[RMDB]
Source information:
An RNA of 207 nucleotides, treated with 2A3 and DMS and read out base by base. The 2A3 profile rests on 2,726 reads. Conditions: 150 mM KOAc, 10 mM MgCl2 and 150 mM bicine (pH 8.5), 24 C. The DMS profile rests on 4,016 reads. The data come from the RNA Mapping Database (RMDB), library M2RFPK.
RNA sequence: GGGAACGACUCGAGUAGAGUCGAAAAGUUAGGCGAGGAUCCUAUACAAACACAGGUUGCUGAUCUGACGACGUCGAGAGACGCCCAAGAUUAGGACAGGAUAUAUCGAACCAAGGUAUAUCCCCAUAAAACUCGGAACACUUCGGUGUUCCGAGAACAAUUUAAGUUCCUUCGGGAACUUAAAUUGAAAAGAAACAACAACAACAAC
Reactivity to 2A3 in 0.01 (KOAc 150mM, MgCl2 10mM, bicine 150mM(pH8.5), 24C), signal-to-noise 3, nucleotides 027 to 156: g030u020u030a010g010g020c090g080a120g070g060a100u070c010c010u080a070u070a150c110a020a180a000c100a020c050a120g120g080u060u200g140c010u010g000a030u020c000u070g010a020c030g000a000c000g010u000c000g000a010g000a010g000a100c000g010c030c000c000a020a010g000a030u020u040a010g000g040a010c030a020g010g000a000u000a000u000a000u000c010g040a080a080c080c020a050a050g000g000u000a010u000a000u010c000c000c000c000a090u170a090a140a050a030c000u000c010g010g000a000a000c000a000c010u080u120c230g070g000u000g000u000u000c000c000g000a000g010a000a010
Reactivity to DMS in 0.01 (KOAc 150mM, MgCl2 10mM, bicine 150mM(pH8.5), 24C), signal-to-noise 3, nucleotides 027 to 156: g020u000u010a030g020g020c030g010a150g030g000a220u000c020c000u030a130u020a200c090a070a090a080c020a070c100a100g020g010u000u000g010c010u010g020a050u000c000u000g020a190c010g000a010c000g000u000c000g010a300g000a300g000a040c000g010c030c020c040a190a090g000a030u000u000a070g010g010a240c060a040g000g000a000u000a020u000a020u000c000g010a080a300c160c100a100a130g030g030u000a010u000a010u000c000c000c030c030a040u010a020a050a030a090c010u010c000g020g000a040a030c000a010c010u000u000c270g020g030u000g040u000u000c000c000g010a000g000a030a020